[RMDB]
RNA sequence: GGGAACGACUCGAGUAGAGUCGAAAAUCGACGGUGUAUAGCUUGGUGCCAGUGUCGCCGCAGGCGCUAGUAUCGUCAUACACAUCCCCAAAAGGAUUCAACCCCGACAGGCCAGCAGCCUUCACUAACCCCUGGACUAUUUCGAUAGUCCAGGGGUAAAAGAAACAACAACAACAAC
Reactivity to DMS in 0.01 (KOAc 150mM, MgCl2 10mM, bicine 150mM(pH8.5), 24C), signal-to-noise 1, nucleotides 027 to 126: u040c120g000a070c150g040g000u010g030u000a030u040a160g070c010u060u000g000g000u030g000c010c020a050g000u000g050u000c020g040c120c010g030c190a160g000g000c020g020c000u000a020g010u000a030u000c000g020u000c000a130u000a020c060a040c000a000u000c020c040c000c110a080a010a220a290g000g000a110u040u000c100a020a040c000c000c000c030g000a240c050a150g000g000c010c020a090g000c010a120g000c020c000u000u000c070a260c120u020a230
Reactivity to 2A3 in 0.01 (KOAc 150mM, MgCl2 10mM, bicine 150mM(pH8.5), 24C), signal-to-noise 3, nucleotides 027 to 126: u140c060g060a050c090g030g030u040g010u010a080u070a180g050c030u030u230g020g020u000g010c000c030a120g070u050g070u090c020g000c140c070g010c080a040g040g010c000g020c010u040a040g040u030a040u030c010g050u030c010a000u040a020c080a000c010a060u070c020c020c000c050a070a150a050a000g050g000a020u050u100c020a030a100c010c010c000c000g020a020c020a010g000g080c000c000a000g040c010a010g040c020c050u070u100c050a080c080u060a050
The record gives the reactivity of an RNA of 177 nucleotides to DMS and 2A3. For 2A3, 1,473 sequencing reads were counted. Values cover nucleotides 27 to 126. For 2A3 the reverse transcriptase was SuperScript II with manganese. For DMS the reverse transcriptase was MarathonRT.